[RMDB]
Chemical mapping of a 177-nucleotide RNA with DMS and 2A3.
2A3 is a SHAPE reagent: it acylates the 2'-hydroxyl of flexible nucleotides of all four kinds.
Reactivities are rounded to 0.1 and cut off at 0 and 3.
RNA sequence: GGGAACGACUCGAGUAGAGUCGAAAACGGCGUGGCAGAACAGAUCAGCCGCCCGGUCGAGGUAGCUGUGGUCACCGUCGAGCUCGUCGCUCCAGAUGAUGGCAGCGGUAUGGGCACGACUCAGCGGGUAUACACUGCUGUUCGCAGCAGUGUAUACAAAAGAAACAACAACAACAAC
Reactivity to DMS in 0.01 (KOAc 150mM, MgCl2 10mM, bicine 150mM(pH8.5), 24C), signal-to-noise 5, nucleotides 027 to 126: c060g010g010c080g030u010g010g000c040a120g020a060a140c220a150g000a100u010c050a100g000c030c020g000c020c010c030g000g000u010c090g000a080g010g020u000a080g000c020u000g000u000g000g000u000c070a080c060c090g000u000c020g000a070g010c030u010c020g010u000c040g000c010u000c000c010a030g000a180u000g000a130u000g000g000c160a030g020c000g010g010u010a030u010g030g000g020c000a150c020g010a040c020u000c050a080g010c040g020g000
Reactivity to 2A3 in 0.01 (KOAc 150mM, MgCl2 10mM, bicine 150mM(pH8.5), 24C), signal-to-noise 5, nucleotides 027 to 126: c010g030g020c060g030u020g020g000c020a020g050a240a070c040a070g110a280u090c030a020g010c000c000g020c000c010c010g050g070u100c070g040a090g060g030u080a030g030c010u030g030u070g100g040u060c030a020c100c040g020u020c010g010a020g010c020u010c010g040u020c000g010c000u000c000c010a040g050a180u300g020a050u040g120g010c110a010g000c010g000g020u100a210u180g010g010g000c030a010c020g020a000c010u000c040a000g040c040g080g000
Notes:
It was measured as part of the RMDB library OK2TRN.